[RMDB]
RNA sequence: GGGAACGACUCGAGUAGAGUCGAAAACUCGGCCGGCAGAACGGCAAGACCGAGAUAGCCGCAGCUAUCGGCCUGUUCGCGCUGCUCAUGAAAGCCGCUCCCAACGUCGUGGGGAUCGCGUCGAGCGUCGGCCUUGAUAGUUCGCUAUCAAGGCCGAAAAAGAAACAACAACAACAAC
Reactivity to DMS in 0.01 (KOAc 150mM, MgCl2 10mM, bicine 150mM(pH8.5), 24C), signal-to-noise 1, nucleotides 027 to 126: c040u000c160g020g000c010c050g010g040c060a050g000a130a130c050g000g000c020a040a050g000a110c090c070g000a100g000a100u010a200g030c000c160g030c060a140g010c020u000a010u000c020g000g000c040c000u010g000u000u020c000g000c220g000c020u000g000c010u000c050a140u020g010a070a060a070g010c020c000g000c070u000c030c000c010a090a100c050g000u000c050g010u000g000g020g020g020a080u000c090g010c060g030u000c050g000a090g040c150g010
Reactivity to 2A3 in 0.01 (KOAc 150mM, MgCl2 10mM, bicine 150mM(pH8.5), 24C), signal-to-noise 1, nucleotides 027 to 126: c020u010c050g010g000c000c020g020g050c010a040g010a120a040c010g000g000c040a040a030g070a040c010c100g030a010g030a140u110a020g050c080c040g060c040a050g020c000u020a000u030c000g000g000c000c040u050g000u020u050c040g040c010g000c000u040g020c000u020c040a040u150g050a110a100a020g000c020c000g010c040u000c040c000c030a020a040c090g060u050c000g040u070g000g060g000g020a010u090c010g040c010g080u100c040g040a060g050c050g100

Conditions: 150 mM KOAc, 10 mM MgCl2 and 150 mM bicine (pH 8.5), 24 C. Structure probing data (DMS and 2A3) for a 177-nucleotide construct. For 2A3, 1,209 sequencing reads were counted.